[RMDB]
RNA sequence: GGGAACGACUCGAGUAGAGUCGAAAACGCCGGUGUCUGGACACCCGCAGUACGUCGCAGCUUCGAUCCCGUAUCGGGUGCCUCUCAAGCCUGCCGCGCCUGGAUUACUGCGGUUCAGUUCUUGUCCUUACCGAUCCCUAUUCGUAGGGAUCGGUAAAAAAGAAACAACAACAACAAC
Reactivity to DMS in 0.01 (KOAc 150mM, MgCl2 10mM, bicine 150mM(pH8.5), 24C), signal-to-noise 2, nucleotides 027 to 126: c110g020c070c070g000g000u010g000u000c040u020g020g000a060c060a070c160c010c000g030c050a040g010u000a020c100g010u020c150g040c040a100g000c020u000u020c130g000a060u030c020c020c010g020u030a100u020c030g030g010g020u010g000c040c040u020c060u010c060a060a050g000c100c070u000g010c000c060g010c060g000c060c050u000g000g050a120u010u010a020c070u000g000c050g000g000u000u000c060a070g000u010u010c040u020u000g030u010c100c060
Reactivity to 2A3 in 0.01 (KOAc 150mM, MgCl2 10mM, bicine 150mM(pH8.5), 24C), signal-to-noise 3, nucleotides 027 to 126: c070g030c010c000g050g040u090g010u020c050u070g060g010a040c010a010c010c020c000g040c010a020g010u030a020c030g030u020c020g020c050a010g000c020u090u050c030g080a090u090c020c010c010g000u060a100u180c020g000g020g030u040g030c010c000u090c020u040c030a050a020g020c000c020u030g010c000c020g050c010g000c010c030u080g030g010a040u020u080a070c030u050g050c000g020g000u010u040c030a020g000u030u030c010u030u080g060u030c010c010
Structure probing data (DMS and 2A3) for a 177-nucleotide construct.
DMS adducts were read by reverse transcription with MarathonRT.
Reactivities are given for positions 27 through 126.
Source: RMDB libraries RFM100 and RFMREP, as collected in RNAgym.
The reactions ran in a buffer of 150 mM KOAc, 10 mM MgCl2 and 150 mM bicine (pH 8.5), at 24 C.
As a SHAPE reagent, 2A3 marks flexible, mostly unpaired nucleotides at the ribose 2'-OH.